An RNA of 207 nucleotides, treated with 2A3 and read out base by base.
[RMDB]
RNA sequence: GGGAACGACUCGAGUAGAGUCGAAAAGCUUGGAAAGUAGUUCGCAGCAAUUACUUUGACUGUCACUCAAAUACCUUUGAUAACAGUCCUGGUAAAGUAGUUAAAAUGCCACGUACUCGUGUGAAUGACGAUGAUACACAAACUUGUUCUCGUGGUCGCGCAUUACUGGUUUCGACCAGUAAUGCGCAAAAGAAACAACAACAACAAC
Reactivity to 2A3 in 0.01 (KOAc 150mM, MgCl2 10mM, bicine 150mM(pH8.5), 24C), signal-to-noise 1, nucleotides 027 to 156: g050c080u000u090g000g020a100a110a040g030u010a000g010u040u090c060g000c150a090g000c000a000a100u000u000a030c000u030u000u060g030a030c000u000g000u000c030a110c030u000c010a020a010a060u300a190c030c120u070u090u000g030a050u050a180a000c000a000g000u000c010c000u050g220g000u160a020a020a020g020u050a020g000u000u020a080a160a170a170u130g000c000c000a000c050g000u020a080c070u010c100g020u090g000u030g060a210a050u110g010a050c080g010a160u050g150a150u190a000c000a000c010a080a210a020c050u070u100g000u030u030c000u020c040g000u000g000g070u090c030
As a SHAPE reagent, 2A3 marks flexible, mostly unpaired nucleotides at the ribose 2'-OH.
It was measured as part of the RMDB library OK3TST.
The RNA was probed in 150 mM KOAc, 10 mM MgCl2 and 150 mM bicine (pH 8.5) at 24 C.